[RMDB]
RNA sequence: GGGAACGACUCGAGUAGAGUCGAAAAAGCUGCUCCAAAUCGGCGGAAAGGACCCCGCUAUCGGGAGAGGCUAGCAGCGAGGGUUGCCGCUCCAGCCGCGCUAUGAAGCAGUCAUAGCAGAUUUACACAUAUACCCGAUAUUCGUAUCGGGUAUAUGAAAAGAAACAACAACAACAAC
Reactivity to 2A3 in 0.01 (KOAc 150mM, MgCl2 10mM, bicine 150mM(pH8.5), 24C), signal-to-noise 4, nucleotides 027 to 126: a010g020c000u020g000c020u010c060c000a040a040a090u260c010g000g000c000g010g020a070a020a050g080g000a020c000c000c010c000g000c020u070a080u160c070g040g060g020a220g040a020g140g130c040u040a030g040c030a000g020c010g010a290g000g000g020u070u150g210c000c000g010c050u000c000c000a040g010c000c010g030c020g000c000u020a020u020g010a060a010g020c030a000g040u020c010a020u030a010g010c030a000g020a100u170u240u270a050c140a000
Reactivity to DMS in 0.01 (KOAc 150mM, MgCl2 10mM, bicine 150mM(pH8.5), 24C), signal-to-noise 9, nucleotides 027 to 126: a110g000c010u000g000c010u000c070c060a040a090a060u010c060g010g010c010g000g000a030a150a230g000g000a120c060c030c000c010g020c020u000a070u010c140g010g010g000a110g010a100g020g010c060u000a070g030c220a030g010c010g010a100g010g000g000u010u010g020c030c020g000c210u000c010c000a110g020c020c010g010c250g010c020u000a020u000g000a050a080g010c050a040g000u000c020a030u000a050g010c050a170g000a120u010u000u010a110c250a190

Source: RMDB library OK2TRN, as collected in RNAgym. An RNA of 177 nucleotides, treated with 2A3 and DMS and read out base by base. Reactivities are given for positions 27 through 126. The reactions ran in a buffer of 150 mM KOAc, 10 mM MgCl2 and 150 mM bicine (pH 8.5), at 24 C. For 2A3 the reverse transcriptase was SuperScript II with manganese. High DMS reactivity at an A or C suggests that its Watson-Crick edge is free.